[RMDB]
RNA sequence: GGGAACGACUCGAGUAGAGUCGAAAAGAGCCCAUAGUAGUGAAGAAGUCUCUGUAAUGGGGAUGGAGCGAAGGGGCGAACAAUCAUUCAGUUUGAGAAUGUCUCGUAUUGCAGAAAUGACAACAUCUGCCGUAACCAAUCGGGUAAAAGGUGGUCAGUAAGCAACAUUGUUCGCAAUGUUGCUUACAAAAGAAACAACAACAACAAC
Reactivity to 2A3 in 0.01 (KOAc 150mM, MgCl2 10mM, bicine 150mM(pH8.5), 24C), signal-to-noise 3, nucleotides 027 to 156: g040a040g010c000c000c000a010u070a010g030u000a010g000u010g070a300a010g030a010a000g000u000c000u000c000u010g090u190a140a140u240g000g000g000g000a000u020g000g010a010g030c000g020a030a010g010g000g000g000c000g000a040a020c070a020a070u100c020a010u060u020c010a000g160u090u130u180g160a130g000a060a040u030g070u000c010u000c060g140u130a100u030u300g060c040a040g060a100a120a050u080g040a060c010a100a040c000a110u020c010u020g010c010c000g010u010a030a010c010c000a010a050u080c000g000g000g000u080a040a070a000a030g020g010u010g030g010u000c000a010
Reactivity to DMS in 0.01 (KOAc 150mM, MgCl2 10mM, bicine 150mM(pH8.5), 24C), signal-to-noise 1, nucleotides 027 to 156: g010a300g000c010c000c000a160u000a180g000u000a270g050u020g030a120a200g000a240a220g010u000c000u010c010u010g030u010a160a120u000g020g030g000g040a010u000g000g000a120g000c020g010a150a160g010g020g020g000c000g000a060a070c000a040a110u010c010a120u000u000c040a080g000u000u020u000g010a180g020a080a070u030g020u000c010u000c110g040u000a060u010u000g000c030a090g010a050a040a070u000g000a140c000a010a100c000a040u000c000u000g110c000c000g010u000a040a080c190c300a200a300u000c010g000g000g010u000a120a030a070a130g000g010u000g000g030u000c040a080

This 207-nucleotide RNA was probed chemically with 2A3 and DMS.
DMS adducts were read by reverse transcription with MarathonRT.
The 2A3 profile rests on 1,486 reads.